[RMDB]
RNA sequence: GGGAACGACUCGAGUAGAGUCGAAAAGCUCGGAGACGAGCAAGGCUGACAAAACCGUGUCCCAACCUCCACGUGGUGUCGGCUGGAUAAUGCUGCAUUAUGUUGCAUUUAUCAACUGGGAAGAAAACCUCGCACGAUGCUUCGGCAUCGUGCGAGGAAAAGAAACAACAACAACAAC
Reactivity to 2A3 in 0.01 (KOAc 150mM, MgCl2 10mM, bicine 150mM(pH8.5), 24C), signal-to-noise 1, nucleotides 027 to 126: g000c000u000c000g010g020a040g010a060c000g000a000g000c000a000a020g000g000c000u020g080a000c050a000a110a000a000c040c060g030u060g100u030c040c030c000a020a020c000c120u100c000c110a070c110g040u130g000g000u000g000u010c000g000g000c000u000g100g000a000u030a010a000u020g020c000u000g000c000a070u070u150a060u300g030u030u000g010c000a000u030u000u140a090u050c000a030a010c060u110g000g000g000a080a040g020a000a110a000a010

Structure probing data (2A3) for a 177-nucleotide construct. The data come from the RNA Mapping Database (RMDB), library OK1LIB. Values are in units of 0.01, from 0 to 300, in steps of 10.